[RMDB]
RNA sequence: GGGAACGACUCGAGUAGAGUCGAAAAUAGCUAGUAGAAUACAAGUUAGACGUAAUACUGUAGGAAUUUAUUAUUUGAUGGCGUAACGAUGCUGCAAUGGCGUAAGACAUCUAACAAGAUCAAGUAAAUGCAUAGCCGUUUUCGAACGGCUAUGCAUAAAAGAAACAACAACAACAAC
Reactivity to DMS in 0.01 (KOAc 150mM, MgCl2 10mM, bicine 150mM(pH8.5), 24C), signal-to-noise 2, nucleotides 027 to 126: u000a090g010c020u000a110g040u150a080g000a250a120u000a000c080a010a180g000u020u050a040g000a090c220g000u000a080a110u000a050c090u000g050u000a000g010g030a080a080u000u010u000a060u020u000a010u010u000u000g000a100u020g000g000c300g000u020a160a060c300g020a010u000g000c000u090g000c030a260a080u030g000g030c010g030u030a000a020g000a130c020a010u000c000u000a100a010c000a000a300g000a010u000c010a010a030g040u000a000a010
Reactivity to 2A3 in 0.01 (KOAc 150mM, MgCl2 10mM, bicine 150mM(pH8.5), 24C), signal-to-noise 1, nucleotides 027 to 126: u110a100g040c000u000a000g080u050a000g030a140a000u000a110c010a000a300g000u220u160a110g180a030c140g090u030a110a050u000a030c030u070g000u080a000g120g000a000a000u120u120u190a030u000u180a140u040u040u070g000a000u000g000g000c000g000u070a110a000c060g000a000u000g000c000u000g030c130a260a150u300g200g000c000g030u000a000a000g120a080c000a000u000c000u000a000a160c000a040a000g000a000u000c020a000a000g010u010a010a010